An RNA of 207 nucleotides, treated with DMS and 2A3 and read out base by base.
[RMDB]
RNA sequence: GGGAACGACUCGAGUAGAGUCGAAAAGAACCCGUCUCGGGACGACGCUAAACUCGCCCUGGUCGGGAUGGGUUUAACGACCCCUCGGGUUUCCUAGUUCCUAAAACUAGGUGGUGGAGUCAUAUAAAAAACUUCUACACGUUCGCGUGUAGAAGAACGAUAAUAUUAUGUUCGCAUAAUAUUAUCGAAAAGAAACAACAACAACAAC
Reactivity to DMS in 0.01 (KOAc 150mM, MgCl2 10mM, bicine 150mM(pH8.5), 24C), signal-to-noise 2, nucleotides 027 to 156: g020a060a070c000c000c020g050u000c040u000c010g030g000g010a010c010g000a120c020g000c040u000a100a120a110c220u000c000g000c000c000c000u010g020g050u000c120g000g000g000a020u000g000g000g000u000u000u000a080a120c030g010a100c010c000c010c030u010c050g040g010g030u010u000u000c020c010u010a070g010u000u000c010c040u000a050a060a060a080c040u000a040g000g010u010g010g010u000g010g000a180g020u010c050a120u010a160u070a030a110a090a050a140a090c000u000u000c000u000a020c000a000c010g010u000u000c300g030c040g020u000g000u000a000g000a000a010g010a020a070
Reactivity to 2A3 in 0.01 (KOAc 150mM, MgCl2 10mM, bicine 150mM(pH8.5), 24C), signal-to-noise 3, nucleotides 027 to 156: g050a020a020c000c010c000g020u010c040u040c040g020g030g040a090c200g000a020c030g040c170u160a090a080a050c020u020c040g020c020c000c020u110g100g110u120c050g020g000g000a020u050g020g010g000u000u030u040a090a020c010g010a010c000c000c000c020u010c010g010g000g000u010u070u020c000c000u000a010g010u020u040c010c010u060a040a060a030a040c030u030a040g020g000u020g020g030u050g040g070a100g020u110c070a050u140a010u280a190a090a020a000a030a070c000u000u000c000u000a000c000a010c020g030u020u050c230g010c010g060u010g000u000a000g000a000a000g000a000a000
Conditions: 150 mM KOAc, 10 mM MgCl2 and 150 mM bicine (pH 8.5), 24 C. For 2A3 the reverse transcriptase was SuperScript II with manganese. For DMS, 4,891 sequencing reads were counted. The data come from the RNA Mapping Database (RMDB), library M2RFPK.